This 177-nucleotide RNA was probed chemically with 2A3 and DMS. Conditions: 150 mM KOAc, 10 mM MgCl2 and 150 mM bicine (pH 8.5), 24 C.

[RMDB]
RNA sequence: GGGAACGACUCGAGUAGAGUCGAAAAUAAAAAUCUCGGAGCGGGCCAGGGCGGACAUGAUCUCGGCGUCGUUCAGGGACAUGCACUUCCUCAGUGGAGGGGGGUGGCUAAUCGUGACCUGGCUGAGCCUAGCUGCAUAUUUCGAUAUGCAGCUAGGAAAAGAAACAACAACAACAAC
Reactivity to 2A3 in 0.01 (KOAc 150mM, MgCl2 10mM, bicine 150mM(pH8.5), 24C), signal-to-noise 1, nucleotides 027 to 126: u290a020a010a030a000a030u050c040u020c030g050g040a110g070c060g040g000g000c000c000a030g000g030g000c040g020g040a020c020a030u130g150a300u010c000u000c000g000g030c050g140u100c070g020u070u020c000a030g000g000g000a010c010a020u060g010c000a010c020u120u190c010c000u050c010a130g120u260g240g110a140g040g010g010g000g020g050u000g060g000c070u110a030a110u090c010g010u000g040a070c010c010u000g010g000c010u010g020a000g020
Reactivity to DMS in 0.01 (KOAc 150mM, MgCl2 10mM, bicine 150mM(pH8.5), 24C), signal-to-noise 2, nucleotides 027 to 126: u050a030a050a040a110a110u010c020u020c040g000g000a210g000c040g010g040g000c010c020a030g030g020g010c040g030g000a190c090a020u000g000a100u000c010u010c010g000g010c100g000u010c080g010u010u000c000a170g000g030g020a020c020a000u000g020c030a040c040u000u000c000c000u000c030a220g010u010g000g000a110g000g000g020g020g000g000u020g000g000c150u010a090a130u020c000g000u020g000a190c030c000u000g000g000c000u040g000a160g010

2A3 adducts were read by reverse transcription with SuperScript II with manganese. DMS adducts were read by reverse transcription with MarathonRT.